[RMDB]
RNA sequence: GGGAACGACUCGAGUAGAGUCGAAAAGGUGGUAUCGGGGCCCAAGCGCACCAGUUCGCCGAUCACCUCGGCAGCUGGCAACCAUUGGCGGCGCCGCUUGAGCGGAACGAUGCGCGCUACGGGGCGAGUGCGGUCUUACAUUCGUGUAAGACCGCACAAAAGAAACAACAACAACAAC
Reactivity to 2A3 in 0.01 (KOAc 150mM, MgCl2 10mM, bicine 150mM(pH8.5), 24C), signal-to-noise 3, nucleotides 027 to 126: g060g000u020g020g060u040a020u240c070g000g000g100g020c010c000c000a000a000g000c000g000c020a040c000c000a000g000u000u000c140g000c050c010g020a020u100c050a120c070c080u000c010g010g000c010a000g000c000u010g000g000c030a010a100c060c040a110u050u120g030g000c050g000g070c040g000c000c010g030c010u240u290g100a040g020c000g000g000a070a000c010g050a090u080g020c060g010c000g000c050u030a060c110g010g000g000g000c070g010a050
Reactivity to DMS in 0.01 (KOAc 150mM, MgCl2 10mM, bicine 150mM(pH8.5), 24C), signal-to-noise 2, nucleotides 027 to 126: g000g020u060g000g000u000a010u020c070g000g000g000g020c030c000c010a090a030g020c000g060c050a250c070c000a000g000u000u000c240g110c020c000g010a000u000c300a100c180c300u040c020g000g000c000a000g030c000u000g000g010c050a080a130c300c040a090u000u000g000g000c020g020g060c080g000c050c000g000c010u030u040g000a110g080c010g000g020a060a080c010g020a090u000g000c040g000c040g040c100u000a090c100g000g000g000g010c000g000a140